Structure probing data (DMS and 2A3) for a 207-nucleotide construct.
For DMS, 3,633 sequencing reads were counted.
The reactions ran in a buffer of 150 mM KOAc, 10 mM MgCl2 and 150 mM bicine (pH 8.5), at 24 C.
For 2A3, 722 sequencing reads were counted.
[RMDB]
RNA sequence: GGGAACGACUCGAGUAGAGUCGAAAAAGGGUGCAGGGCGGAUGCCUUGGCACUAGGAGCCGAUGAAGGACGUGAUAAGCUGCGAUAAGCUUCGGGGAGUUGCACGUAAACUUUGAUCCGAAGAUUUCCGAAUGAGGAAACUCACUUAGAGUAAUGAAUAUUACUGCACUUUCGAGUGCAGUAAUAUAAAAGAAACAACAACAACAAC
Reactivity to DMS in 0.01 (KOAc 150mM, MgCl2 10mM, bicine 150mM(pH8.5), 24C), signal-to-noise 2, nucleotides 027 to 156: a060g030g000g010u000g030c020a090g030g010g030c010g030g000a150u010g010c020c000u000u000g030g020c010a010c010u000a060g000g020a170g030c000c040g010a110u000g040a190a130g080g000a070c030g030u000g000a130u000a070a190g040c020u000g000c030g020a120u000a050a110g000c010u000u000c040g000g000g000g000a060g040u000u000g000c000a170c230g010u010a070a030a060c020u000u000u020g000a080u010c010c010g030a040a060g000a150u020u020u000c010c010g020a030a040u000g010a140g030g000a140a080a150c010u010c010a060c080u000u020a100g010a110g010u000a070a110u000g010a110
Reactivity to 2A3 in 0.01 (KOAc 150mM, MgCl2 10mM, bicine 150mM(pH8.5), 24C), signal-to-noise 2, nucleotides 027 to 156: a020g150g010g000u030g010c000a000g030g000g060c090g240g100a130u300g010c010c010u010u030g130g000c000a000c000u000a030g000g100a010g040c040c010g000a000u060g030a040a030g030g000a010c000g000u000g000a030u020a100a040g020c010u030g000c000g080a100u010a050a000g000c000u010u000c000g030g000g000g000a000g010u000u040g030c070a030c210g050u070a030a050a020c000u240u220u020g000a010u000c010c020g030a000a000g020a000u000u000u000c040c000g050a170a120u050g010a030g000g060a040a060a080c010u040c000a060c020u060u150a030g010a000g050u130a100a110u130g080a020